[RMDB]
RNA sequence: GGGAACGACUCGAGUAGAGUCGAAAAAGCUGAAGGAGAGGUCUGUAGGAAAUUUAACCUUACUAAUUGCUGCCUACACAUAGAUAACCAAGGGCAAGUAGUUGAAGACAUAGUUAGAGAUAUGACAAUGGCCAUAUCUUUUCGAAGAUAUGGCCAUAAAAGAAACAACAACAACAAC
Reactivity to DMS in 0.01 (KOAc 150mM, MgCl2 10mM, bicine 150mM(pH8.5), 24C), signal-to-noise 2, nucleotides 027 to 126: a060g020c030u010g020a160a080g000g000a080g000a040g000g010u000c060u000g010u010a060g020g010a060a040a080u020u010u000a050a080c060c050u000u000a100c100u000a030a050u010u000g010c060u000g000c020c010u000a060c120a060c110a100u000a050g000a130u020a070a180c150c090a060a110g010g000g000c020a060a070g020u000a040g020u000u010g040a030a080g010a080c060a040u000a060g000u000u020a060g010a030g000a060u010a070u000g010a080c130a090